[RMDB]
RNA sequence: GGGAACGACUCGAGUAGAGUCGAAAACUGAGAUUCGUCUCAGAAUAAUGAUAUGGACGUAUCGAUUAGACAUGCUGACGUGGGAUCGGAAACGAUCCCACUAUCAGCAACAGCUAAUCGAGUACGUCCUAAGUCUCGUCCGCCGAUUCGUCGGCAAAUCAGAUACUAAUUUCGAUUAGUAUCUGAUAAAAGAAACAACAACAACAAC
Reactivity to 2A3 in 0.01 (KOAc 150mM, MgCl2 10mM, bicine 150mM(pH8.5), 24C), signal-to-noise 8, nucleotides 027 to 156: c000u000g000a000g000a000u040u190c240g080u000c100u000c000a000g060a010a050u250a060a090u140g070a020u040a070u150g000g000a000c000g000u000a010u030c000g000a010u000u000a010g060a090c060a090u050g000c000u000g000a000c010g000u000g000g000g010a000u000c010g010g040a060a070a030c000g000a000u000c000c000c000a000c010u000a040u020c000a000g020c000a000a010c030a000g020c000u000a000a000u000c000g000a010g020u010a000c000g000u000c000c000u000a000a000g000u000c000u020c070g130u050c060c060g000c000c000g010a020u050u080c190g060u020c010g110g000c000a070a000
Reactivity to DMS in 0.01 (KOAc 150mM, MgCl2 10mM, bicine 150mM(pH8.5), 24C), signal-to-noise 4, nucleotides 027 to 156: c020u000g000a020g010a060u000u000c300g030u010c010u000c000a020g010a110a100u000a130a110u010g010a190u010a190u000g010g020a030c000g060u010a030u010c010g020a030u000u000a010g020a030c070a300u000g010c010u000g010a020c250g020u000g020g030g000a010u000c010g010g000a170a110a250c020g020a010u000c000c000c000a000c010u000a010u000c000a010g010c010a020a040c130a220g010c020u000a000a010u000c010g010a080g030u000a000c010g010u000c000c000u000a000a040g000u000c020u000c060g010u000c060c090g000c000c010g020a120u000u000c250g020u010c000g020g000c000a020a050